This 177-nucleotide RNA was probed chemically with DMS and 2A3. Reactivities are given for positions 27 through 126. It was measured as part of the RMDB library OK2TST. For DMS the reverse transcriptase was MarathonRT. The 2A3 profile rests on 2,581 reads. The reactions ran in a buffer of 150 mM KOAc, 10 mM MgCl2 and 150 mM bicine (pH 8.5), at 24 C.

[RMDB]
RNA sequence: GGGAACGACUCGAGUAGAGUCGAAAAGAAGCAGACACAAGUACCGUUACGCAUAUGGACGUUUCUCCAAAGCAAUUGGUAUCGAUUGUUACAGGUUUAAUUCCAUUUUUAGAGCAUGACGAUGCUAACAGUACCUGACAUUCGUGUCAGGUACUGUAAAAGAAACAACAACAACAAC
Reactivity to DMS in 0.01 (KOAc 150mM, MgCl2 10mM, bicine 150mM(pH8.5), 24C), signal-to-noise 3, nucleotides 027 to 126: g000a100a100g010c070a030g010a080c090a050c130a140a100g000u000a020c050c010g010u000u000a030c120g020c050a110u020a060u000g000g000a020c300g030u000u000u000c030u000c000c030a020a180a070g010c020a030a030u000u000g030g000u000a080u020c010g000a040u010u010g000u000u000a050c170a230g010g000u000u010u000a040a080u000u000c010c010a090u010u010u020u000u000a100g000a130g010c010a030u000g000a060c130g020a040u000g000c020u000a090
Reactivity to 2A3 in 0.01 (KOAc 150mM, MgCl2 10mM, bicine 150mM(pH8.5), 24C), signal-to-noise 2, nucleotides 027 to 126: g080a020a020g010c060a010g060a110c010a000c010a060a060g020u010a040c000c050g030u030u010a050c020g000c010a040u020a050u170g000g010a000c040g020u030u040u000c020u000c000c010a060a030a010g000c000a030a030u030u040g120g080u270a140u300c040g000a040u020u020g000u040u040a090c090a060g000g010u020u020u030a030a030u080u000c010c000a040u080u050u030u070u200a170g020a040g040c020a000u030g020a040c060g010a020u010g000c000u020a040